An RNA of 177 nucleotides, treated with DMS and 2A3 and read out base by base.
The RNA was probed in 150 mM KOAc, 10 mM MgCl2 and 150 mM bicine (pH 8.5) at 24 C.
DMS adducts were read by reverse transcription with MarathonRT.
RNA sequence: GGGAACGACUCGAGUAGAGUCGAAAAGUGGACGAAGCGGAAGCGAGAAUGUCGGCUUGAGUAACGCAAACGUUGGUGAGAAUCCAAUGCCUCGAAAACCUAAGGGUUCCUCCGCAAGGUUCGUCCAAUGACCAACACAUUUCGAUGUGUUGGUCAUAAAAGAAACAACAACAACAAC
Reactivity to DMS in 0.01 (KOAc 150mM, MgCl2 10mM, bicine 150mM(pH8.5), 24C), signal-to-noise 3, nucleotides 027 to 126: g060u000g000g010a010c020g000a020a110g000c020g020g020a020a140g010c010g070a030g010a120a110u000g010u030c040g040g000c060u010u010g020a140g000u020a090a050c050g010c110a050a100a100c160g010u000u000g000g000u000g000a170g000a250a140u000c000c020a020a050u000g010c190c010u000c060g010a080a030a040a060c000c020u000a100a090g020g020g000u000u010c230c060u000c010c000g010c030a120a080g030g010u010u000c000g000u000c000c010a020
Reactivity to 2A3 in 0.01 (KOAc 150mM, MgCl2 10mM, bicine 150mM(pH8.5), 24C), signal-to-noise 2, nucleotides 027 to 126: g070u040g020g000a000c020g000a050a010g000c010g030g000a040a030g090c040g000a000g000a120a050u200g110u280c000g030g000c000u050u130g050a080g100u120a080a030c050g000c060a060a050a020c060g020u020u000g040g000u040g000a080g010a070a000u030c010c000a000a030u070g030c020c000u040c020g000a050a050a060a050c010c010u060a070a140g080g020g020u020u000c010c020u000c000c000g000c040a080a080g090g030u020u010c000g000u000c000c020a010